[RMDB]
RNA sequence: GGGAACGACUCGAGUAGAGUCGAAAAUCAGGCGGGGGCCGAGGUCACGCACAGGGUUGAUGGCGUAGCCGGUCGGUGUGCCUAGUGACAAGCCUAUGGCAACGAUCACAAAGGCGACUGCGAAAUACCUUUACCAGAACUUCGGUUCUGGUAAAGGAAAAGAAACAACAACAACAAC
Reactivity to 2A3 in 0.01 (KOAc 150mM, MgCl2 10mM, bicine 150mM(pH8.5), 24C), signal-to-noise 1, nucleotides 027 to 126: u080c000a010g050g000c040g050g020g000g050g000c010c000g010a040g020g000u080c030a000c070g060c010a130c020a130g150g040g090u080u050g100a120u090g010g000c000g030u000a010g030c030c020g070g000u080c020g000g050u090g040u040g060c020c000u020a000g010u010g040a050c050a080a020g040c020c000u280a180u290g000g000c000a000a050c080g010a200u000c040a010c070a060a110a000g030g010c000g020a050c000u040g030c050g070a100a080a000u130a030
Reactivity to DMS in 0.01 (KOAc 150mM, MgCl2 10mM, bicine 150mM(pH8.5), 24C), signal-to-noise 2, nucleotides 027 to 126: u030c060a170g020g000c020g050g010g010g000g000c070c020g000a070g020g000u000c030a050c070g000c040a100c130a150g000g010g000u000u020g010a100u020g010g000c060g000u000a110g000c000c030g030g040u030c000g010g030u000g020u010g030c000c020u000a290g030u000g020a020c070a100a210g020c070c010u000a080u030g030g050c010a050a130c180g000a150u000c000a050c020a050a080a150g020g000c000g000a120c020u000g020c030g020a050a120a080u020a100